[RMDB]
Conditions: 150 mM KOAc, 10 mM MgCl2 and 150 mM bicine (pH 8.5), 24 C. Chemical mapping of a 177-nucleotide RNA with 2A3 and DMS. DMS (dimethyl sulfate) methylates the pairing face of unpaired adenines and cytosines. DMS adducts were read by reverse transcription with MarathonRT. The DMS profile rests on 17,157 reads. The data come from the RNA Mapping Database (RMDB), library OK2TRN.
RNA sequence: GGGAACGACUCGAGUAGAGUCGAAAAAAAUGCAAUUGUCCAUGCCUAGCCCCACCUCUAUGCGCUGUCGAUGGCACCAACGGAGUGGACCUGGUUGCCUAUAAACCGAUUAUUAGUAGCGCGUUACAAUAAACAAACAGUUCGCUGUUUGUUUAUUAAAAGAAACAACAACAACAAC
Reactivity to 2A3 in 0.01 (KOAc 150mM, MgCl2 10mM, bicine 150mM(pH8.5), 24C), signal-to-noise 5, nucleotides 027 to 126: a000a000a000u110g000c030a010a070u110u080g030u040c010c000a010u040g010c000c030u030a080g000c000c000c010c000a040c000c030u020c020u050a070u110g020c010g000c010u000g010u060c020g020a040u050g010g000c000a010c000c000a080a090c080g080g020a090g130u190g020g060a040c000c020u000g020g010u150u140g000c000c000u070a080u130a070a040a010c040c010g020a020u090u070a050u070u120a180g140u080a010g020c000g000c000g010u020u020a030c020
Reactivity to DMS in 0.01 (KOAc 150mM, MgCl2 10mM, bicine 150mM(pH8.5), 24C), signal-to-noise 9, nucleotides 027 to 126: a040a040a050u010g010c040a070a070u010u000g010u000c020c020a090u000g010c030c030u000a120g000c070c010c010c060a120c090c040u010c080u000a050u000g010c020g020c010u000g010u000c020g010a180u000g000g010c020a030c020c010a040a100c190g010g010a150g020u000g010g010a070c040c100u000g000g010u000u010g020c010c010u000a070u000a030a050a110c140c010g010a040u000u000a110u010u010a120g010u000a040g010c020g020c030g020u010u010a060c190